[RMDB]
RNA sequence: GGGAACGACUCGAGUAGAGUCGAAAAUCCCGUCCCAAGCCUGCUCGACGAAUUUGCAUUCGAUGUUCAUGCGCUUGCAAAGGUCGUUUCCGAGAUCGAUGUCGAAGCCGAUCAGCUUUCCGCCCGCGCUAUGGGCCUAUUUCGAUAGGCCCAUAGCAAAAGAAACAACAACAACAAC
Reactivity to 2A3 in 0.01 (KOAc 150mM, MgCl2 10mM, bicine 150mM(pH8.5), 24C), signal-to-noise 6, nucleotides 027 to 126: u010c000c000c000g030u030c010c010c000a070a010g020c000c010u030g020c020u030c020g030a020c010g070a090a110u020u030u050g020c020a010u050u020c020g060a060u050g140u240u110c100a100u300g030c010g000c020u040u010g000c020a030a020a010g060g020u010c000g030u020u030u000c030c030g020a040g020a110u070c060g030a030u110g040u080c050g050a050a000g010c020c010g010a070u050c020a020g050c020u040u040u020c020c030g020c010c010c000g060c000
Reactivity to DMS in 0.01 (KOAc 150mM, MgCl2 10mM, bicine 150mM(pH8.5), 24C), signal-to-noise 2, nucleotides 027 to 126: u020c000c010c000g000u010c030c020c020a120a150g000c050c000u010g020c020u010c030g020a070c100g000a080a080u010u020u010g000c020a000u000u000c000g020a020u000g010u040u030c130a060u040g000c010g000c040u000u020g000c020a000a100a070g020g010u000c010g000u000u000u010c000c020g030a140g000a050u000c060g000a080u000g000u000c060g040a060a070g020c020c040g010a060u010c060a050g000c020u000u000u020c030c050g000c050c010c010g010c170